[RMDB]
RNA sequence: GGGAACGACUCGAGUAGAGUCGAAAACAGUGCACCCUGGAAUGAGUCUGAGAAAUAGGGUCAGGUUCUAGAUAUGUAGGUAUGCAGCGUAAUGUGUCAUGGAAAGACUUAUCGGUGCACGAUGGGCAUAAUAAUUGAAUUUCGAUUCAAUUAUUAUAAAAGAAACAACAACAACAAC
Reactivity to 2A3 in 0.01 (KOAc 150mM, MgCl2 10mM, bicine 150mM(pH8.5), 24C), signal-to-noise 9, nucleotides 027 to 126: c020a000g010u010g010c010a020c010c020c050u090g080g120a120a050u060g010a020g050u010c010u030g050a020g090a120a140a060u180a090g060g020g030u030c010a020g010g030u050u020c020u060a060g040a130u100a050u200g110u080a030g060g070u070a050u120g030c020a020g010c040g060u090a080a120u110g060u020g030u070c030a050u050g040g060a090a060a010g000a010c000u010u010a030u120c030g010g000u010g000c020a000c010g000a040u060g020g050g010c050
Reactivity to DMS in 0.01 (KOAc 150mM, MgCl2 10mM, bicine 150mM(pH8.5), 24C), signal-to-noise 9, nucleotides 027 to 126: c060a130g010u000g010c010a010c010c010c220u030g010g020a100a050u010g010a030g000u000c010u000g010a130g010a080a100a090u020a090g010g010g010u010c030a040g010g010u010u000c030u000a070g010a080u020a040u010g010u010a060g010g010u020a050u010g010c050a050g010c080g010u010a060a060u030g010u010g010u010c040a070u020g010g000a100a090a050g000a030c020u000u000a030u010c100g000g010u000g000c010a010c000g000a080u020g000g010g020c150